Source information: This 177-nucleotide RNA was probed chemically with 2A3 and DMS. The 2A3 profile rests on 9,174 reads. For DMS, 18,156 sequencing reads were counted. The RNA was probed in 150 mM KOAc, 10 mM MgCl2 and 150 mM bicine (pH 8.5) at 24 C. For 2A3 the reverse transcriptase was SuperScript II with manganese. Reactivities are given for positions 27 through 126.
RNA sequence: GGGAACGACUCGAGUAGAGUCGAAAAGUCAAGAUGUGUAGGAUAGGUGGGAGGCUUUGAAGUGUGGACGCCAGUCUGCAUGGAGCCGACCUUGAAAUACCACCCUUUAAUGGAAAAACAUAGUGAACAUAUGAUAGCAGUUCGCUGCUAUCAUAUGAAAAGAAACAACAACAACAAC
Reactivity to 2A3 in 0.01 (KOAc 150mM, MgCl2 10mM, bicine 150mM(pH8.5), 24C), signal-to-noise 4, nucleotides 027 to 126: g070u050c030a040a040g040a080u040g020u020g010u060a010g050g090a020u010a030g000g040u030g010g030g020a130g020g000c010u300u210u040g030a020a010g000u000g000u010g010g000a000c010g020c040c010a000g010u000c000u000g000c000a010u010g000g000a010g000c000c000g000a010c000c010u000u020g010a020a010a000u040a010c010c000a010c010c000c020u070u080u090a130a140u140g060g000a070a080a020a020a000c050a050u150a050g180u110g130a040a020
Reactivity to DMS in 0.01 (KOAc 150mM, MgCl2 10mM, bicine 150mM(pH8.5), 24C), signal-to-noise 9, nucleotides 027 to 126: g010u000c040a070a160g000a030u000g010u000g020u000a030g000g010a090u000a030g010g020u010g010g000g010a190g020g010c010u000u000u010g000a100a100g010u010g010u000g010g000a010c010g010c130c210a100g010u000c000u000g000c010a010u000g000g000a010g020c010c000g000a080c280c060u000u000g000a060a050a090u000a090c010c010a030c010c010c050u000u000u010a080a080u000g000g000a040a040a070a090a080c080a060u010a090g010u000g010a090a170